Source: RMDB library RNAMAK, as collected in RNAgym. An RNA of 207 nucleotides, treated with 2A3 and read out base by base. The 2A3 profile rests on 1,279 reads.

RNA sequence: GGGAACGACUCGAGUAGAGUCGAAAAGGGGUCUUACUGGAAGGCCGACGAAGAGUAAGCUAGCUCUGAAGCCUCCACGGAGCUUGGACCUUACUCAGAGGCUGGAGGUAAGACGGAGGCACCCAAACGCCACGCAUGAUUCGUCAUGCGUGGCGAAUCCAUGACUUUUGUUCGCAAAAGUCAUGGAAAAAGAAACAACAACAACAAC
Reactivity to 2A3 in 0.01 (KOAc 150mM, MgCl2 10mM, bicine 150mM(pH8.5), 24C), signal-to-noise 1, nucleotides 027 to 156: g020g010g010g010u000c010u010u000a020c030u060g090g130a120a070g100g000c020c030g020a110c040g020a080a100g010a030g000u010a000a010g010c050u040a000g020c000u000c000u010g040a080a010g010c000c000u000c000c010a020c020g010g010a020g000c000u120u190g050g030a070c030c000u000u000a000c010u000c020a030g020a030g050g020c030u040g000g080a060g060g010u000a000a000g000a000c010g000g000a020g000g030c020a030c000c010c000a070a130a030c040g030c000c000a000c010g010c000a000u000g000a030u040u130c220g060u010c110a000u000g000c000g000u000g000g000c010g010a000a000
Reactivities are given for positions 27 through 156.
2A3 adducts were read by reverse transcription with SuperScript II with manganese.
Conditions: 150 mM KOAc, 10 mM MgCl2 and 150 mM bicine (pH 8.5), 24 C.